[RMDB]
Conditions: 150 mM KOAc, 10 mM MgCl2 and 150 mM bicine (pH 8.5), 24 C. The record gives the reactivity of an RNA of 207 nucleotides to 2A3 and DMS. For 2A3 the reverse transcriptase was SuperScript II with manganese. Values cover nucleotides 27 to 156.
RNA sequence: GGGAACGACUCGAGUAGAGUCGAAAAUGGAUGCAGCAUAGUCCAGAAGGUGGGCUGGCAAACCAUGGGCCAUGUCUAACAUAAGCCUGAAAUAUGAUAGCCAGUGUUAGCUGCUAGCUGAAACUGUACCACUGCAGUUUGUCAAAGCAGGCUACAAUACUGGUAAUCAUUUCGAUGAUUACCAGUAAAAAGAAACAACAACAACAAC
Reactivity to 2A3 in 0.01 (KOAc 150mM, MgCl2 10mM, bicine 150mM(pH8.5), 24C), signal-to-noise 6, nucleotides 027 to 156: u080g030g020a020u080g070c090a030g020c030a120u090a070g030u020c010c020a020g050a120a030g090g020u050g010g030g010c020u010g010g000c030a060a060a030c040c010a050u060g010g010g000c010c010a030u060g040u010c110u150a140a080c030a080u110a060a060g010c000c010u020g050a040a110a020u230a080u110g090a070u050a020g010c010c010a020g010u030g060u120u050a010g010c020u030g010c050u040a060g020c030u040g020a040a010a000c000u010g010u040a080c030c070a090c110u050g000c000a000g010u000u060u070g120u070c050a070a040a030g020c010a000g040g000c000u020a030c030a030a090
Reactivity to DMS in 0.01 (KOAc 150mM, MgCl2 10mM, bicine 150mM(pH8.5), 24C), signal-to-noise 5, nucleotides 027 to 156: u010g020g030a060u000g000c060a080g040c030a130u000a140g010u000c010c020a100g000a100a120g010g040u000g020g020g010c010u010g010g050c010a100a080a080c030c020a120u000g010g020g000c010c030a070u000g020u000c090u010a090a110c040a070u000a120a070g020c010c010u000g020a110a090a150u010a080u000g000a140u000a100g020c000c010a090g020u000g010u000u000a070g030c020u000g010c040u010a100g020c020u000g020a110a030a060c010u010g010u000a150c030c100a050c080u000g000c010a050g020u000u010u000g010u000c070a080a060a140g000c030a070g010g010c020u000a050c080a050a280